[RMDB]
RNA sequence: GGGAACGACUCGAGUAGAGUCGAAAAGAUAUGGACGGCUCUUGGAUUUAUACAUAUGUAUGUCGGAAACGACAUACUAAGUGUAUUGUCAGAGCUGUCCUAAGUCAAAGGCCUGUUCGCAGGCCAACGUAGAGUAAGUCUUCGGACUUACUCUACGAAAAGAAACAACAACAACAAC
Reactivity to DMS in 0.01 (KOAc 150mM, MgCl2 10mM, bicine 150mM(pH8.5), 24C), signal-to-noise 3, nucleotides 027 to 126: g000a040u000a300u000g000g010a030c000g010g010c010u000c000u000u010g020g020a030u010u000u000a020u010a000c000a010u000a300u000g000u000a000u000g000u000c000g000g000a130a070a180c010g010a010c000a000u000a000c000u000a020a110g020u000g000u000a000u000u000g000u000c000a030g000a010g010c000u000g000u000c000c000u000a000a060g010u010c020a100a150a120g000g030c000c000u000g010u000u010c180g030c010a010g000g000c000c000a000a020
Reactivity to 2A3 in 0.01 (KOAc 150mM, MgCl2 10mM, bicine 150mM(pH8.5), 24C), signal-to-noise 4, nucleotides 027 to 126: g020a020u050a050u140g000g000a010c000g030g000c010u020c050u130u300g180g000a050u080u300u110a030u070a010c010a000u060a030u260g010u000a010u000g000u000c000g010g020a030a080a050c010g000a000c010a000u010a010c000u000a150a070g010u010g000u010a020u030u040g010u010c000a010g000a010g000c000u000g000u000c000c000u000a010a010g010u000c040a140a050a110g010g000c000c010u000g040u050u090c300g020c080a000g010g000c030c000a010a010